An RNA of 177 nucleotides, treated with 2A3 and DMS and read out base by base. The reactions ran in a buffer of 150 mM KOAc, 10 mM MgCl2 and 150 mM bicine (pH 8.5), at 24 C. Values cover nucleotides 27 to 126. For 2A3 the reverse transcriptase was SuperScript II with manganese. The data come from the RNA Mapping Database (RMDB), libraries RFM100 and RFMREP.
[RMDB]
RNA sequence: GGGAACGACUCGAGUAGAGUCGAAAAACUAAAUGGGACGGGACUCCUGUCCUCUCGAUUGUCGCUCAGCACGGACAGACUAUAAGCCUGAUGGUCGUUCCCCAUCGGGCCUGAAACCGCAGAUCGCAGAAAUCUAUGCAUUCGUGCAUAGAUUUCUAAAAGAAACAACAACAACAAC
Reactivity to 2A3 in 0.01 (KOAc 150mM, MgCl2 10mM, bicine 150mM(pH8.5), 24C), signal-to-noise 5, nucleotides 027 to 126: a000c080u120a070a070a050u170g010g000g010a000c020g020g000g110a150c060u090c120c010u020g010u000c030c000u020c010u010c000g100a100u020u140g100u060c010g020c010u010c030a020g030c000a020c030g010g090a050c020a000g030a020c030u090a110u050a300a010g000c000c000u050g050a070u050g040g030u070c010g000u020u010c000c000c000c000a010u020c010g010g000g000c000c010u010g010a050a000a010c020c010g010c010a010g000a070u090c050g000c060
Reactivity to DMS in 0.01 (KOAc 150mM, MgCl2 10mM, bicine 150mM(pH8.5), 24C), signal-to-noise 4, nucleotides 027 to 126: a110c060u010a060a060a070u030g020g010g020a030c030g000g000g000a170c100u020c010c020u000g000u000c000c020u000c080u020c050g000a040u010u010g010u010c050g000c010u000c020a110g010c100a090c050g010g000a190c080a050g010a090c130u020a130u040a130a130g010c040c030u000g000a110u010g020g000u000c000g000u000u000c000c010c000c110a020u010c070g000g000g000c010c020u010g010a050a060a080c060c040g000c060a050g010a070u040c070g000c170